[RMDB]
RNA sequence: GGGAACGACUCGAGUAGAGUCGAAAAGAUAUGGAUACGCCCCUAGCCGUGUCAUUAGGGAGGAGUCGAUUCGGAAACGAAUCGCUCCGACGAUCUAAUGAGCACGGCUAGGGGCGUAUCCUAAGUCCCUAAGAUAAUGGUUCGCCAUUAUCUUAGGAAAAGAAACAACAACAACAAC
Reactivity to DMS in 0.01 (KOAc 150mM, MgCl2 10mM, bicine 150mM(pH8.5), 24C), signal-to-noise 1, nucleotides 027 to 126: g000a150u020a300u020g010g000a020u000a010c000g030c000c020c010c010u000a000g000c000c020g050u000g020u000c010a010u000u000a000g000g010g000a030g030g010a030g020u010c060g030a010u000u000c020g040g000a170a110a270c010g010a030a000u010c000g010c010u000c000c000g010a020c300g010a010u010c000u000a010a010u000g020a110g010c010a010c000g000g000c020u000a000g030g000g010g010c000g000u000a010u000c000c000u010a010a080g010u000c050